[RMDB]
RNA sequence: GGGAACGACUCGAGUAGAGUCGAAAAUUUAGAGAGAUGGCAUUUUGCCAUGUUGCUCAGGCUGGUCCUGAACUCCUGGGCUCAAGUGAUCCUUCUGCAUCAGCCUCCCAAAAUGCUGGGAUUAUGGACUCCGCAAGCAGUUCGCUGCUUGCGGAGUAAAAGAAACAACAACAACAAC
Reactivity to 2A3 in 0.01 (KOAc 150mM, MgCl2 10mM, bicine 150mM(pH8.5), 24C), signal-to-noise 1, nucleotides 027 to 126: u060u070u070a130g040a000g090a000g000a120u040g030g010c070a080u120u160u210u300g000c000c000a000u000g070u090u090g070c000u000c000a000g000g000c130u090g050g000u000c000c000u030g000a020a000c000u000c040c000u040g030g030g010c000u040c000a170a120g140u190g160a060u050c020c020u010u100c020u100g000c000a020u000c010a020g010c000c000u030c020c000c000a000a140a050a000u130g000c060u000g040g020g030a000u000u020a050u100g020g000
The record gives the reactivity of an RNA of 177 nucleotides to 2A3. The RNA was probed in 150 mM KOAc, 10 mM MgCl2 and 150 mM bicine (pH 8.5) at 24 C. It was measured as part of the RMDB library OK1LIB.